[RMDB]
RNA sequence: GGGAACGACUCGAGUAGAGUCGAAAACUGGAUUCAUAACACAGAUAAUAUUGCUUGGGGGUCUCUUAACUUAACAAAAGGUGCACCAGAAUCGUGUUUUAAGGCAACCAAACUGAUAUCAGACAUCGAAUCCCUUGGGAUUCGUCCCAAGGGAUUCAAAAGAAACAACAACAACAAC
Reactivity to DMS in 0.01 (KOAc 150mM, MgCl2 10mM, bicine 150mM(pH8.5), 24C), signal-to-noise 4, nucleotides 027 to 126: c020u010g010g010a110u000u010c060a060u010a100a120c100a100c080a080g010a090u010a060a100u000a060u010u000g000c030u000u000g010g000g000g000g020u000c030u000c060u000u000a050a060c080u000u000a060a110c130a060a050a090a050g000g010u000g010c030a020c060c070a080g000a060a060u010c080g010u000g010u000u000u000u000a080a080g010g000c050a050a060c040c030a020a020a050c040u010g000a080u010a070u000c060a080g000a130c170a080u000c110
Reactivity to 2A3 in 0.01 (KOAc 150mM, MgCl2 10mM, bicine 150mM(pH8.5), 24C), signal-to-noise 2, nucleotides 027 to 126: c010u020g040g040a090u070u090c050a060u110a220a030c080a010c000a080g090a040u100a190a040u070a120u060u160g020c020u030u010g020g000g010g000g030u000c000u020c000u100u070a090a090c010u080u070a030a010c020a020a090a000a020g030g000u010g040c000a030c020c020a020g060a030a050u070c070g030u040g000u070u050u030u130a050a020g000g000c010a050a000c000c000a000a020a020c040u070g030a010u010a030u210c030a040g090a140c020a070u060c060

Chemical mapping of a 177-nucleotide RNA with DMS and 2A3. The data come from the RNA Mapping Database (RMDB), library OK2TRN. For DMS, 3,654 sequencing reads were counted. Reactivities are given for positions 27 through 126. For DMS the reverse transcriptase was MarathonRT. Conditions: 150 mM KOAc, 10 mM MgCl2 and 150 mM bicine (pH 8.5), 24 C. For 2A3, 1,873 sequencing reads were counted.